[RMDB]
The record gives the reactivity of an RNA of 177 nucleotides to DMS and 2A3. For 2A3 the reverse transcriptase was SuperScript II with manganese.
RNA sequence: GGGAACGACUCGAGUAGAGUCGAAAAGCGGUUGUACGCCCUCAUGUAGCUAUAGCACUCGGCCUAGAAGACUCGAGGCAAUGUAAGCGGACACUUCCGGUGUCGAAUGCCAGCAGUAUCAUUAUACCCAAAACGGUGAGUUCGCUCACCGUUUUGGAAAAGAAACAACAACAACAAC
Reactivity to DMS in 0.01 (KOAc 150mM, MgCl2 10mM, bicine 150mM(pH8.5), 24C), signal-to-noise 1, nucleotides 027 to 126: g030c200g030g000u000u000g040u030a040c000g000c020c020c010u060c020a070u030g010u090a060g000c020u000a110u020a130g020c010a000c000u000c000g030g000c010c030u010a080g000a080a070g030a060c070u010c000g000a190g000g000c010a100a100u000g050u000a090a010g020c030g020g000a300c010a000c020u000u000c120c070g000g000u010g020u040c010g000a030a040u010g000c040c040a090g020c050a020g000u030a000u010c060a050u100u020a150u050a130c070
Reactivity to 2A3 in 0.01 (KOAc 150mM, MgCl2 10mM, bicine 150mM(pH8.5), 24C), signal-to-noise 2, nucleotides 027 to 126: g020c010g030g020u040u050g030u110a030c000g000c020c000c000u050c030a090u200g080u060a000g010c020u000a010u040a230g030c010a050c110u030c000g010g010c010c010u000a020g060a070a060g060a110c020u030c060g060a050g010g000c050a050a030u110g030u110a070a120g110c000g050g030a000c010a000c060u040u100c020c010g040g020u060g000u020c040g020a080a050u040g040c000c080a030g000c000a000g000u090a010u030c000a000u020u120a090u110a290c000